[RMDB]
RNA sequence: GGGAACGACUCGAGUAGAGUCGAAAACAUUACAUUGCUAUACGAUGAAUACACGAUUUAAUCCAUCUGUAUUAAAGAUAUUGUUACACCACGGCAUGCGUAACUUUGAUAGCAAGGAUGAAAAAGGACAUAUUCCUCUACACCACUAUCUGAUUCACACCUGUUUUCUCUUCGGAGAAAACAGGUGAAAAGAAACAACAACAACAAC
Reactivity to 2A3 in 0.01 (KOAc 150mM, MgCl2 10mM, bicine 150mM(pH8.5), 24C), signal-to-noise 2, nucleotides 027 to 156: c060a030u060u190a050c060a160u110u070g020c010u060a020u010a150c030g040a050u050g060a030a000u070a000c010a010c140g110a040u030u070u170a090a010u060c010c010a020u020c020u020g010u020a010u000u100a110a150a070g090a070u070a030u110u170g040u020u030a040c020a010c060c000a100c070g040g050c080a040u060g000c060g020u040a000a120c020u060u060u150g010a000u030a000g050c150a170a120g050g030a110u040g080a030a020a020a020a020g040g010a060c070a060u150a110u090u120c020c020u000c010u040a030c030a020c110c020a060c020u090a090u110c010u040g100a220u000u000c000a020